The record gives the reactivity of an RNA of 177 nucleotides to DMS and 2A3. For 2A3 the reverse transcriptase was SuperScript II with manganese. Reactivities are given for positions 27 through 126. The reactions ran in a buffer of 150 mM KOAc, 10 mM MgCl2 and 150 mM bicine (pH 8.5), at 24 C. It was measured as part of the RMDB library OK2TST.
RNA sequence: GGGAACGACUCGAGUAGAGUCGAAAACGCGAACGUCAUGUGCGUAGGAGUGAUAAGCGAAGAGGACUGGCUUGUCAGCAGUGAAGAGAUCAGUGAACUCUUCGUCAGUCAAAGCUUCGUUAUUAUCCGAGCUCCUAUGAUUCGUCAUAGGAGCUCGAAAAGAAACAACAACAACAAC
Reactivity to DMS in 0.01 (KOAc 150mM, MgCl2 10mM, bicine 150mM(pH8.5), 24C), signal-to-noise 2, nucleotides 027 to 126: c050g010c050g010a060a110c130g000u010c110a080u010g060u000g000c030g010u000a070g040g010a070g030u010g010a000u000a050a060g010c000g010a000a000g030a120g000g000a000c000u000g020g000c040u010u000g000u020c070a060g040c170a120g000u010g020a010a020g010a010g000a090u000c110a150g030u010g010a080a120c000u000c000u000u000c000g000u000c040a040g000u000c010a070a070a190g020c000u000u000c010g020u000u000a060u000u000a060u000c010
Reactivity to 2A3 in 0.01 (KOAc 150mM, MgCl2 10mM, bicine 150mM(pH8.5), 24C), signal-to-noise 2, nucleotides 027 to 126: c030g030c060g080a080a040c040g060u150c140a100u230g040u150g010c040g010u030a110g080g040a100g060u140g030a030u030a060a010g010c000g020a000a000g040a040g100g000a000c010u020g030g000c000u130u110g160u240c090a030g060c060a050g100u020g110a010a020g020a000g000a120u070c080a080g100u070g170a110a060c000u000c000u000u020c030g020u020c000a000g000u000c020a160a030a000g020c000u040u030c040g030u030u050a070u020u030a010u020c020